[RMDB]
RNA sequence: GGGAACGACUCGAGUAGAGUCGAAAAAUCUGAGCGGAAUUUUGAUGAGUUGAUGAAGUAUUAUGCGCCAGAUGCCGCGCUGGUCAUCAAGCCUGGGAUGAUUGUCAGAGGCAAGGAUAAUAUCCGCAGUCUUGACAAAGUUCGCUUUGUCAAGACUAAAAGAAACAACAACAACAAC
Reactivity to 2A3 in 0.01 (KOAc 150mM, MgCl2 10mM, bicine 150mM(pH8.5), 24C), signal-to-noise 1, nucleotides 027 to 126: a000u080c100u080g030a020g040c040g060g100a130a080u100u070u150u150g030a170u110g010a010g120u070u000g010a050u070g000a160a000g110u070a070u300u060a040u120g010c020g000c000c030a090g140a300u120g160c080c000g030c040g000c030u060g050g000u000c000a000u000c020a060a000g000c020c090u040g040g050g020a050u020g060a060u070u180g120u100c000a000g000a000g140g060c000a010a010g020g000a000u000a040a000u030a150u090c000c000g000c090
Reactivity to DMS in 0.01 (KOAc 150mM, MgCl2 10mM, bicine 150mM(pH8.5), 24C), signal-to-noise 2, nucleotides 027 to 126: a110u000c020u000g010a150g030c040g020g020a070a160u000u000u000u000g000a140u000g000a120g020u000u000g010a060u000g000a080a040g000u000a070u000u010a050u000g010c010g010c010c050a190g020a140u020g010c150c070g010c000g000c020u000g010g000u000c020a020u000c010a040a090g010c030c020u000g020g000g000a050u010g000a090u010u020g010u010c000a050g020a100g030g000c020a080a080g010g010a060u000a030a060u000a300u000c010c010g030c120